RNA sequence: GGGAACGACUCGAGUAGAGUCGAAAAGCGGUCGAGGUUGGCCGCAAUGACAUCAUCUUCCCAGCUGGAGAAGAACACCGACGAUCCAGGAUCGCCCUGGCGCCCAGCCCGGCCACGCAACUGGUUAAUACUGGUCAUCCUUCGGGAUGACCAGUAUAAAAGAAACAACAACAACAAC
Reactivity to 2A3 in 0.01 (KOAc 150mM, MgCl2 10mM, bicine 150mM(pH8.5), 24C), signal-to-noise 2, nucleotides 027 to 126: g010c010g000g000u000c030g090a060g230g100u190u210g090g000c000c000g000c000a010a110u040g040a010c000a080u230c000a030u000c000u020u000c000c000c000a030g060c100u200g030g050a130g030a180a020g060a100a040c020a020c050c050g040a040c050g000a040u050c010c000a010g030g020a100u160c040g160c040c000c000u010g000g020c000g000c020c010c000a010g020c000c000c000g050g030c030c000a050c020g050c000a000a080c000u040g000g070u140u160a020
Reactivity to DMS in 0.01 (KOAc 150mM, MgCl2 10mM, bicine 150mM(pH8.5), 24C), signal-to-noise 2, nucleotides 027 to 126: g000c020g040g000u000c040g040a180g020g010u060u020g010g000c070c000g010c000a060a000u000g000a130c040a080u000c090a140u040c110u000u000c000c000c000a130g030c100u020g000g000a090g000a230a070g010a190a110c020a070c060c100g020a210c000g000a060u020c020c050a030g000g000a140u000c070g000c000c000c030u000g000g020c060g000c120c010c020a130g000c030c020c030g000g020c050c010a010c030g000c140a050a060c100u000g000g000u040u000a110